[RMDB]
RNA sequence: GGGAACGACUCGAGUAGAGUCGAAAAAUUCCAACACCUUCGAUGUUGGUUGCUGCGAUAAUAGCUCACCAAAGCUGGCGUCGAUCUCUGCGUUGGUAUCCAGUGGGUCAAAGCUUUCAUAAGCUUCCUAAUGCCUCCAAUUCGUUGGAGGCAUUAGAAAAGAAACAACAACAACAAC
Reactivity to DMS in 0.01 (KOAc 150mM, MgCl2 10mM, bicine 150mM(pH8.5), 24C), signal-to-noise 5, nucleotides 027 to 126: a150u000u010c000c000a040a040c050a020c060c120u000u010c120g020a090u000g020u000u010g000g010u000u000g010c060u010g010c070g000a100u010a060a160u010a070g030c050u010c070a100c120c090a090a140a120g010c040u000g000g010c100g030u000c050g000a060u000c070u000c070u000g030c060g010u010u000g020g020u000a070u010c070c060a100g010u000g000g000g010u000c090a070a050a050g000c010u000u000u010c190a120u010a060a070g000c020u000u000c090
Reactivity to 2A3 in 0.01 (KOAc 150mM, MgCl2 10mM, bicine 150mM(pH8.5), 24C), signal-to-noise 2, nucleotides 027 to 126: a040u080u040c000c010a000a000c010a010c000c030u140u160c070g060a030u050g010u020u030g040g040u020u110g060c040u030g040c010g010a030u030a140a040u060a210g000c030u010c040a100c020c000a120a120a020g010c020u020g020g020c010g020u030c030g050a080u050c030u020c040u140g040c010g050u030u030g060g000u040a100u050c060c010a050g040u110g070g020g000u050c040a050a000a000g000c000u010u070u010c100a090u080a160a010g040c000u070u050c000